[RMDB]
RNA sequence: GGGAACGACUCGAGUAGAGUCGAAAAGGAUGUGGCAUCAUAUUACUAGCCAUCGCACGAAAUUAAUAGGAUGGCACGUCCUCAUCUUAGAUGGAACAACCACGUCAUCUCACGGGUGGAUCCAUUCGUGACCCAUAAAGUUCGCUUUAUGGGUCACAAAAGAAACAACAACAACAAC
Reactivity to DMS in 0.01 (KOAc 150mM, MgCl2 10mM, bicine 150mM(pH8.5), 24C), signal-to-noise 1, nucleotides 027 to 126: g020g020a000u000g030u000g000g000c000a040u000c030a010u000a010u000u000a020c210u030a130g020c040c100a140u010c230g030c170a110c070g000a080a100a020u010u000a040a020u000a070g010g000a010u010g010g000c000a010c010g030u000c000c030u010c080a080u000c020u000u000a130g020a050u000g010g000a030a100c080a090a030c010c010a080c010g020u020c120a080u000c140u000c070a060c050g010g010g030u010g000g040a080u000c030c010a030u000u000c170
Reactivity to 2A3 in 0.01 (KOAc 150mM, MgCl2 10mM, bicine 150mM(pH8.5), 24C), signal-to-noise 2, nucleotides 027 to 126: g010g010a030u000g020u000g010g140c000a020u000c000a010u020a000u020u020a030c030u020a050g060c010c040a120u100c120g040c050a060c070g060a020a100a000u070u030a000a000u040a010g030g000a010u000g000g090c010a000c010g010u000c000c000u010c010a090u000c000u080u170a050g010a050u010g010g000a050a030c020a030a090c080c030a300c070g030u020c060a170u030c070u110c070a010c000g040g000g000u020g010g020a070u020c000c010a010u010u010c020
Chemical mapping of a 177-nucleotide RNA with DMS and 2A3. The data come from the RNA Mapping Database (RMDB), library RFMREP.